RNA sequence: GGGAACGACUCGAGUAGAGUCGAAAAAGAAUCUCCUUCGGGAGAUUCUGAACCACUAAGCUGAUUGCGGAUCACGACGAGGCAGCUCGUGUCGAGCAACCACCGAGAACAGGUUCGCCUGUUCUAAGGAGGUUAAAGAAUUCGUUCUUUAACCUCCAAAAGAAACAACAACAACAAC
Reactivity to 2A3 in 0.01 (KOAc 150mM, MgCl2 10mM, bicine 150mM(pH8.5), 24C), signal-to-noise 4, nucleotides 027 to 126: a010g000a010a000u000c010u010c010c010u030u080c160g090g000g010a000g000a000u000u000c000u000g000a010a020c020c000a040c120u110a100a060g060c060u040g040a120u030u090g020c020g040g000a040u110c030a010c060g040a010c020g020a090g240g120c090a040g020c080u000c020g030u030g030u030c020g030a030g030c010a020a030c010c020a030c030c070g130a020g000a030a000c000a000g010g030u040u040c150g080c010c000u010g000u010u000c010u020a030a040
Reactivity to DMS in 0.01 (KOAc 150mM, MgCl2 10mM, bicine 150mM(pH8.5), 24C), signal-to-noise 7, nucleotides 027 to 126: a010g000a020a000u000c000u000c000c000u000u010c170g020g020g010a010g000a000u000u000c000u000g000a090a220c010c010a100c190u010a080a090g020c130u000g010a050u000u000g010c030g000g000a140u000c030a040c040g010a030c060g000a140g020g010c130a100g010c080u000c020g020u000g010u000c020g010a300g000c040a040a040c020c010a040c120c090g000a040g000a010a010c010a010g010g010u000u010c190g010c000c000u000g000u000u000c000u010a040a120